An RNA of 177 nucleotides, treated with 2A3 and DMS and read out base by base.
For 2A3 the reverse transcriptase was SuperScript II with manganese.
DMS adducts were read by reverse transcription with MarathonRT.
The data come from the RNA Mapping Database (RMDB), library TTRINS.
For 2A3, 2,899 sequencing reads were counted.
Conditions: 150 mM KOAc, 10 mM MgCl2 and 150 mM bicine (pH 8.5), 24 C.

RNA sequence: GGGAACGACUCGAGUAGAGUCGAAAAGAUAUGGAGUGGCAGUCUGUGAAGCUAGCUACCCACCGUUAUUAUGUUUCGGAAACGAAACAUAAUAACGAGGCUAGUGGAGACUGGCACUCCUAAGUCAGAAACUGAUGUAGUUCGCUACAUCAGUUUCAAAAGAAACAACAACAACAAC
Reactivity to 2A3 in 0.01 (KOAc 150mM, MgCl2 10mM, bicine 150mM(pH8.5), 24C), signal-to-noise 1, nucleotides 027 to 126: g180a080u300a270u300g010g000a000g010u020g020g300c010a000g000u000c000u060g300u040g300a010a000g000c020u000a000g000c000u050a120c060c000c000a010c020c000g000u000u000a000u010u000a000u020g010u030u030u000c010g030g020a100a080a020c010g000a000a010a000c010a000u000a010a020u000a000a000c010g000a000g010g000c000u000a000g010u020g000g010a030g010a020c000u000g010g030c000a000c010u000c020c000u010a020a010g090u050c120a030
Reactivity to DMS in 0.01 (KOAc 150mM, MgCl2 10mM, bicine 150mM(pH8.5), 24C), signal-to-noise 2, nucleotides 027 to 126: g000a190u000a260u000g020g020a020g030u000g000g000c000a010g000u000c000u010g000u020g000a180a210g000c000u000a000g020c000u010a140c040c000c030a300c210c000g010u000u010a000u000u000a000u000g000u000u000u000c010g000g010a090a090a260c000g000a020a000a000c000a010u010a000a000u010a000a000c010g010a030g000g010c000u000a020g000u010g020g010a000g000a000c000u000g000g000c000a000c000u000c000c000u010a010a120g000u010c130a130